[RMDB]
RNA sequence: GGGAACGACUCGAGUAGAGUCGAAAAGGCGCGCACCGAUGUCAGUGAUAAAUUACACCAUAAGUGUAGACGCUGAGACAAUGUGUGCAGCUAGUACUACUGAUGGCGAGACACAAUACGGUGACGCGAUUAUAUUAAUUUUCGAAUUAAUAUAAUCAAAAGAAACAACAACAACAAC
Reactivity to DMS in 0.01 (KOAc 150mM, MgCl2 10mM, bicine 150mM(pH8.5), 24C), signal-to-noise 9, nucleotides 027 to 126: g010g010c060g010c030g010c000a010c000c010g010a160u020g010u000c010a020g010u000g000a120u050a050a070a100u030u000a020c010a020c000c080a110u060a110a300g000u000g010u000a010g010a140c040g000c000u000g000a040g010a120c150a100a110u010g010u000g010u000g010c020a300g000c000u000a030g010u020a080c130u030a090c140u020g010a090u010g000g000c010g000a300g000a030c000a010c010a060a070u030a200c020g010g010u000g000a110c010g010c010
Reactivity to 2A3 in 0.01 (KOAc 150mM, MgCl2 10mM, bicine 150mM(pH8.5), 24C), signal-to-noise 9, nucleotides 027 to 126: g100g000c010g000c010g000c010a000c000c000g030a020u060g060u030c010a000g000u000g040a060u090a120a110a030u110u030a020c010a000c010c030a070u050a190a060g000u000g000u010a020g010a030c000g000c000u000g000a010g030a050c100a130a150u120g030u010g000u030g040c010a000g000c000u020a010g050u070a100c070u030a030c020u070g070a060u060g030g000c000g010a020g010a020c000a000c000a000a040u110a040c010g000g000u010g020a050c000g000c000
Chemical mapping of a 177-nucleotide RNA with DMS and 2A3. The DMS profile rests on 110,582 reads. 2A3 adducts were read by reverse transcription with SuperScript II with manganese.